[RMDB]
RNA sequence: GGGAACGACUCGAGUAGAGUCGAAAAGGAUCCUAAGUAGUCUGGGUAACUGCCUCGAGAUCAGUUACCAGUGAGGACUACUCAAUUUGACAUAGAUCUCGAGGAUGUCGGGUUGAGAAUAGGAUCGCUACACCUUUGUAUUCGUACAAAGGUGUAGAAAAGAAACAACAACAACAAC
Reactivity to 2A3 in 0.01 (KOAc 150mM, MgCl2 10mM, bicine 150mM(pH8.5), 24C), signal-to-noise 4, nucleotides 027 to 126: g040g000a010u000c000c000u020a040a020g020u010a000g000u000c010u020g150g000g000u000a000a000c000u000g010c000c010u060c080g140a110g010a120u060c000a000g000u000u000a000c000c000a000g040u030g090a090g010g010a010c000u000a000c000u000c000a000a000u010u000u020g000a000c000a000u030a020g110a110u040c040u030c070g030a060g100g060a010u010g000u000c000g000g020g000u000u010g010a020g030a060a050u030a030g000g000a000u000c000g000
Reactivity to DMS in 0.01 (KOAc 150mM, MgCl2 10mM, bicine 150mM(pH8.5), 24C), signal-to-noise 7, nucleotides 027 to 126: g000g000a010u000c000c000u000a040a140g010u000a010g010u000c000u000g010g010g010u000a000a010c000u000g000c150c040u010c240g000a150g010a140u000c000a010g000u000u000a010c010c000a120g010u010g010a150g000g010a020c010u000a060c000u000c000a000a010u000u000u000g000a020c000a030u000a050g000a080u000c040u000c050g000a100g000g000a020u000g000u000c010g000g000g010u000u000g000a050g010a100a130u000a010g010g010a010u000c000g010
This 177-nucleotide RNA was probed chemically with 2A3 and DMS. The DMS profile rests on 21,144 reads. Conditions: 150 mM KOAc, 10 mM MgCl2 and 150 mM bicine (pH 8.5), 24 C. It was measured as part of the RMDB library OK2TRN.